[RMDB]
Structure probing data (2A3 and DMS) for a 177-nucleotide construct. For DMS the reverse transcriptase was MarathonRT. The DMS profile rests on 8,915 reads.
RNA sequence: GGGAACGACUCGAGUAGAGUCGAAAAGAGUUAAAAAUAGUAAAAUCAUGCAGCUGCCGGGAUUCGAACCCGGGUUGUAGGCUUGGAAGGCCCAAGUAAUAACCAGACUAUACCACAGCUGCAUUAAGAGGAGUGAUAUAUUCGUAUAUCACUCCUCAAAAGAAACAACAACAACAAC
Reactivity to 2A3 in 0.01 (KOAc 150mM, MgCl2 10mM, bicine 150mM(pH8.5), 24C), signal-to-noise 5, nucleotides 027 to 126: g030a010g070u170u190a060a050a070a070a130u220a060g100u190a060a100a050a200u160c030a020u000g000c000a000g000c010u010g020c000c020g030g000g070a050u170u180c100g050a070a060c000c010c010g000g030g000u010u050g020u010a030g040g000c000u010u030g000g040a140a080g150g000c030c020c000a020a040g030u060a020a230u030a090a010c030c020a010g040a050c040u090a060u070a130c020c060a030c010a040g000c000u000g000c000a020u010u030a010a010
Reactivity to DMS in 0.01 (KOAc 150mM, MgCl2 10mM, bicine 150mM(pH8.5), 24C), signal-to-noise 5, nucleotides 027 to 126: g000a120g010u020u010a040a060a070a100a110u040a100g010u050a090a070a120a080u040c100a030u000g000c000a010g010c000u000g010c070c020g010g000g010a120u020u020c160g030a070a100c000c000c000g000g000g030u000u000g020u020a030g000g000c010u000u020g000g000a220a120g000g040c140c000c010a040a070g010u000a040a050u010a070a110c030c040a070g010a080c060u020a050u020a060c130c090a240c040a010g000c000u000g000c000a010u010u030a070a160